[RMDB]
RNA sequence: GGGAACGACUCGAGUAGAGUCGAAAAGGGGUCUGGUGUGGCUCGAGACAUGUGUAUUACUGAAGCCUCCACGGUAAUCCACACAACAGCUCGAGCGUAACAUCACCAGACGGAGGCACCCAAAAGCUUACUCGACCUUUCGAGGUCGAGUAAGCAAGCACACAUAAUGAUUCGUCAUUAUGUGUGCAAAAGAAACAACAACAACAAC
Reactivity to 2A3 in 0.01 (KOAc 150mM, MgCl2 10mM, bicine 150mM(pH8.5), 24C), signal-to-noise 4, nucleotides 027 to 156: g200g000g020g010u010c010u000g000g000u010g020u040g050g010c000u000c010g010a020g020a070c240a180u140g000u000g000u000a000u010u010a020c010u020g030a130a020g010c000c000u000c010c010a020c000g000g000u000a000a010u140c220c000a000c020a010c020a100a290c080a090g060c000u000c000g000a000g000c010g000u010a030a010c010a060u190c000a000c000c000a000g000a000c000g000g010a000g000g000c010a030c000c010c000a050a130a010a020g000c000u000u000a000c000u000c000g000a000c010c000u080u140u220c300g110a000g000g000u010c000g000a000g000u000a000a000g000c000a000a000
Reactivity to DMS in 0.01 (KOAc 150mM, MgCl2 10mM, bicine 150mM(pH8.5), 24C), signal-to-noise 1, nucleotides 027 to 156: g010g000g000g030u000c030u000g040g040u010g000u010g060g020c000u000c000g020a010g040a080c100a080u010g010u000g000u000a040u000u000a060c010u000g000a030a270g000c020c000u030c040c000a300c040g040g000u000a000a040u000c040c070a010c000a110c080a090a170c150a250g000c030u000c020g000a020g020c000g030u000a020a130c010a130u000c000a000c040c000a070g000a020c040g020g000a020g050g040c000a090c000c010c000a100a050a140a090g000c010u000u000a010c000u000c010g000a020c000c050u000u000u000c240g000a010g080g040u010c000g000a010g000u010a000a000g010c000a020a000